Overview:
This 177-nucleotide RNA was probed chemically with DMS and 2A3. DMS adducts were read by reverse transcription with MarathonRT.

[RMDB]
RNA sequence: GGGAACGACUCGAGUAGAGUCGAAAAACUCACUACCAUCCAGCAGUACUCCAAGACAUUUUAUGUGCUGCCGCUUCGUGGCAAGCUUUCCUUUUGGGAAGCUGGUACGACUAAGGCUGGCUACCCAAGUACUCCAUUACUUCGGUAAUGGAGUACUAAAAGAAACAACAACAACAAC
Reactivity to DMS in 0.01 (KOAc 150mM, MgCl2 10mM, bicine 150mM(pH8.5), 24C), signal-to-noise 3, nucleotides 027 to 126: a090c090u010c060a150c120u000a080c040c040a050u000c050c050a070g020c030a040g020u000a060c040u010c160c070a050a100g000a090c080a050u010u000u020u000a070u010g010u010g010c040u000g020c010c030g010c130u000u000c040g020u010g010g020c030a050a040g000c010u010u000u000c010c000u000u000u000u000g020g030g010a020a000g020c000u000g020g000u000a020c030g010a080c260u010a070a170g020g040c000u000g010g000c040u010a090c020c010c020a050
Reactivity to 2A3 in 0.01 (KOAc 150mM, MgCl2 10mM, bicine 150mM(pH8.5), 24C), signal-to-noise 2, nucleotides 027 to 126: a020c030u040c010a070c020u050a040c000c010a080u060c010c010a000g010c020a010g040u000a050c000u030c060c010a060a060g070a100c070a170u120u140u030u100a100u190g060u020g060c040u010g000c010c010g000c020u000u050c030g050u010g060g020c030a070a050g010c000u030u000u010c050c000u160u250u200u220g000g010g000a020a000g000c000u010g000g090u020a050c010g030a030c060u110a120a070g040g020c030u020g040g040c010u050a070c010c010c000a020
Record summary:
Conditions: 150 mM KOAc, 10 mM MgCl2 and 150 mM bicine (pH 8.5), 24 C. For 2A3, 2,247 sequencing reads were counted.